[RMDB]
RNA sequence: GGGAACGACUCGAGUAGAGUCGAAAACGCAUGCGAAAGCAUGCGGCUAUGCUAAUGCAUGGCGAGGGGUUACACGGUGACAUUCCCCCGUAUGUGGUUAUUAUUCCGCAUACGAUUACCAGUGUCUGUUAUUAUUCAGAUACAUGGACGUCACCAAAUAUCAGCCUCCAUUCGUGGAGGCUGAUAUAAAAGAAACAACAACAACAAC
Reactivity to DMS in 0.01 (KOAc 150mM, MgCl2 10mM, bicine 150mM(pH8.5), 24C), signal-to-noise 1, nucleotides 027 to 156: c010g040c000a030u000g020c010g020a140a080a300g020c000a000u000g000c000g000g040c090u000a010u000g000c010u010a120a190u000g010c000a000u000g020g010c030g000a160g010g010g000g010u000u000a160c070a080c050g010g020u000g000a010c060a300u000u000c000c000c030c050c000g070u010a000u020g000u000g020g020u000u000a170u000u020a300u000u000c010c020g000c000a010u000a030c040g010a060u000u010a040c000c010a090g000u000g000u000c010u010g050u010u000a300u000u040a250u010u010c030a000g000a010u000a000c000a060u010g070g010a050c120g030u010c000a000c000c000a050a180
Reactivity to 2A3 in 0.01 (KOAc 150mM, MgCl2 10mM, bicine 150mM(pH8.5), 24C), signal-to-noise 2, nucleotides 027 to 156: c000g010c000a000u000g010c010g050a060a030a070g000c000a000u000g000c000g000g030c000u000a000u000g010c030u150a150a150u300g000c000a000u000g010g000c010g040a130g010g000g000g060u080u100a060c180a030c110g000g000u000g010a000c000a010u050u070c000c000c000c000c000g000u000a010u000g010u020g030g050u070u030a050u260u110a090u160u070c000c000g010c010a000u000a010c000g000a020u010u140a030c000c000a030g020u010g090u010c000u040g070u080u040a250u200u090a080u140u110c000a000g000a000u000a010c070a180u010g010g020a040c090g000u000c000a000c000c000a000a060